[RMDB]
RNA sequence: GGGAACGACUCGAGUAGAGUCGAAAAGAUAUGGAUGAAUCGGGAGCAGAGCUGUCGGAAACGACAGUCCUGCGAAGAACGAGUUCAUCCUAAGUCAAAGAAGUAGGCUGUUCGCAGCCUACUUCAACGCUAUCUUUUAGUUCGCUAAAAGAUAGCGAAAAGAAACAACAACAACAAC
Reactivity to 2A3 in 0.01 (KOAc 150mM, MgCl2 10mM, bicine 150mM(pH8.5), 24C), signal-to-noise 3, nucleotides 027 to 126: g010a000u030a010u050g000g000a010u010g000a000a030u020c020g020g020g020a040g010c000a000g000a010g020c000u010g020u000c000g010g010a020a010a020c010g000a000c000a000g010u030c010c010u010g010c010g030a030a020g000a000a000c000g010a060g140u030u020c000a000u020c000c000u020a020a010g010u020c050a140a040a180g010a010a010g010u010a000g010g000c000u030g050u100u160c300g030c200a000g000c000c000u000a000c000u000u010c000a000a000
Reactivity to DMS in 0.01 (KOAc 150mM, MgCl2 10mM, bicine 150mM(pH8.5), 24C), signal-to-noise 4, nucleotides 027 to 126: g000a030u000a080u010g000g000a010u000g000a010a020u000c010g000g020g000a040g030c000a010g000a060g000c010u000g010u000c000g020g010a020a010a060c000g010a010c000a000g010u000c010c000u000g030c000g000a060a100g000a100a260c010g000a050g010u000u000c010a000u000c000c000u000a010a080g000u010c020a100a130a120g000a010a000g010u000a000g000g010c010u000g010u000u000c230g030c000a010g010c000c000u000a000c000u000u000c000a040a090
An RNA of 177 nucleotides, treated with 2A3 and DMS and read out base by base.
For 2A3, 10,982 sequencing reads were counted.
It was measured as part of the RMDB library TTRDEL.
Reactivities are given for positions 27 through 126.
The reactions ran in a buffer of 150 mM KOAc, 10 mM MgCl2 and 150 mM bicine (pH 8.5), at 24 C.
For 2A3 the reverse transcriptase was SuperScript II with manganese.